RNA sequence: GGGAACGACUCGAGUAGAGUCGAAAAGAUAUGGAUCCGUUCGAGCUUGGAUUUAUACAGGAACUCCAAAUGGUCGGAAACGACCAUUUGGAUAGUACUGUAUUGUCAGCUCGUAGGAUCCUAAGUCGCCUUAGACAUAGUUCGCUAUGUCUAAGGCAAAAGAAACAACAACAACAAC
Reactivity to DMS in 0.01 (KOAc 150mM, MgCl2 10mM, bicine 150mM(pH8.5), 24C), signal-to-noise 1, nucleotides 027 to 126: g020a110u030a300u000g000g000a000u000c000c000g000u000u010c020g000a000g000c020u000u000g010g000a040u000u000u010a000u000a010c010a010g010g020a270a210c300u000c000c000a020a010a000u000g000g060u000c000g000g010a120a070a200c000g020a020c000c010a000u000u000u000g000g000a000u000a020g000u000a130c000u000g000u000a010u000u000g000u010c000a030g010c010u000c000g010u000a170g000g000a000u020c010c000u000a000a110g000u010c130
Reactivity to 2A3 in 0.01 (KOAc 150mM, MgCl2 10mM, bicine 150mM(pH8.5), 24C), signal-to-noise 3, nucleotides 027 to 126: g050a040u150a050u190g030g020a000u010c040c060g270u250u120c020g000a000g000c070u260u300g300g000a100u300u300u110a000u050a000c010a000g010g000a010a000c020u040c010c000a000a000a010u000g030g000u010c000g050g040a110a060a100c030g020a000c000c010a000u000u000u010g020g000a000u010a000g000u000a000c000u000g010u000a000u000u010g000u000c000a000g000c010u020c000g000u000a000g010g000a000u010c000c000u000a010a010g010u000c070

Chemical mapping of a 177-nucleotide RNA with DMS and 2A3. For 2A3, 4,594 sequencing reads were counted. It was measured as part of the RMDB library TTRINS.